The record gives the reactivity of an RNA of 177 nucleotides to DMS and 2A3. For 2A3 the reverse transcriptase was SuperScript II with manganese.

[RMDB]
RNA sequence: GGGAACGACUCGAGUAGAGUCGAAAAAUGAGCAGCGUUGCCAGGUAUGCCACCAGCUGCGCCAUCGGAUUAAGUCGAUGGUGGGGAUCUCUACCGAUGUGAUGAUCGUUAACUGUGGCAGUAUCCACGUGAUCACCCUCUUCGGAGGGUGAUCACGAAAAGAAACAACAACAACAAC
Reactivity to DMS in 0.01 (KOAc 150mM, MgCl2 10mM, bicine 150mM(pH8.5), 24C), signal-to-noise 1, nucleotides 027 to 126: a070u000g000a070g020c030a080g000c000g000u000u010g000c070c050a110g010g050u000a010u000g020c080c030a070c030c070a110g010c000u000g000c040g030c020c010a000u000c010g000g010a090u000u010a130a150g010u000c010g000a020u000g000g010u000g000g000g000g000a040u010c030u000c010u000a120c090c090g000a090u010g010u020g000a060u000g010a020u000c040g010u000u010a080a130c080u000g010u000g000g010c010a030g000u010a050u020c010c030a150
Reactivity to 2A3 in 0.01 (KOAc 150mM, MgCl2 10mM, bicine 150mM(pH8.5), 24C), signal-to-noise 1, nucleotides 027 to 126: a000u110g020a030g000c030a000g000c000g130u160u150g050c040c000a000g050g020u100a050u070g050c040c000a050c000c040a020g000c020u050g000c000g050c010c000a000u000c020g030g020a080u060u300a290a070g110u100c000g000a000u000g030g030u010g000g000g070g020a060u010c010u000c010u050a060c000c060g130a070u150g100u160g100a070u040g020a010u000c000g050u070u060a110a130c070u050g000u000g020g010c000a000g000u060a050u030c020c000a050
The 2A3 profile rests on 1,042 reads.